[RMDB]
RNA sequence: GGGAACGACUCGAGUAGAGUCGAAAAGAUAUGGAAUAUGACGGGCACUACGGCAGGACAUGCCUCAUGUUCGGAAACGAACAGGAAGGCAACAGCCUGGCCGUAGUGCCCGUCAUAUUCCUAAGUCGUUAAGAACACUGUUCGCAGUGUUCUUAACAAAAGAAACAACAACAACAAC
Reactivity to DMS in 0.01 (KOAc 150mM, MgCl2 10mM, bicine 150mM(pH8.5), 24C), signal-to-noise 2, nucleotides 027 to 126: g010a100u000a300u020g010g010a020a000u000a010u000g000a020c020g000g000g000c010a020c010u010a000c010g000g020c000a020g000g010a040c110a240u000g000c010c010u000c030a120u000g010u000u000c000g000g000a140a110a250c010g010a000a010c010a020g010g010a130a060g000g010c000a030a070c290a180g010c000c000u000g020g020c000c010g040u010a000g010u000g000c010c000c000g030u000c000a000u000a000u000u000c000c000u000a020a050g000u010c150
This 177-nucleotide RNA was probed chemically with DMS. The reactions ran in a buffer of 150 mM KOAc, 10 mM MgCl2 and 150 mM bicine (pH 8.5), at 24 C. For DMS, 2,940 sequencing reads were counted. Source: RMDB library TTRINS, as collected in RNAgym.